Structure probing data (2A3) for a 207-nucleotide construct. Source: RMDB library RNAMAK, as collected in RNAgym. For 2A3 the reverse transcriptase was SuperScript II with manganese. The 2A3 profile rests on 919 reads.

RNA sequence: GGGAACGACUCGAGUAGAGUCGAAAAGGGGUCGUGCGAGCAAUAUUGUCAGGCUCGGGUACUGAAGCCUCCACGGUAUCUCUAGCGUGGCCUUGGAUUUAUAUUGCGAGCACGACGGAGGCACCCAAAGGAAUGGGAUCUUCGGAUCCCAUUCCAAGACCUAUCAUCACUUCGGUGAUGAUAGGUCAAAAGAAACAACAACAACAAC
Reactivity to 2A3 in 0.01 (KOAc 150mM, MgCl2 10mM, bicine 150mM(pH8.5), 24C), signal-to-noise 1, nucleotides 027 to 156: g000g000g050g040u030c020g000u000g000c030g000a020g010c010a010a000u020a050u170u220g070u140c030a010g080g000c000u000c000g030g010g000u000a000c000u010g020a170a010g000c000c000u010c010c000a000c000g010g000u030a040u060c090u020c030u180a020g040c010g170u070g020g030c030c030u140u210g010g050a070u080u270u160a100u110a000u080u000g010c000g000a000g040c010a000c000g010a010c040g000g000a000g010g010c000a030c000c000c000a050a100a080g020g000a000a000u040g000g010g020a000u000c000u060u160c250g070g000a000u010c010c000c000a000u000u010c000c000a000a000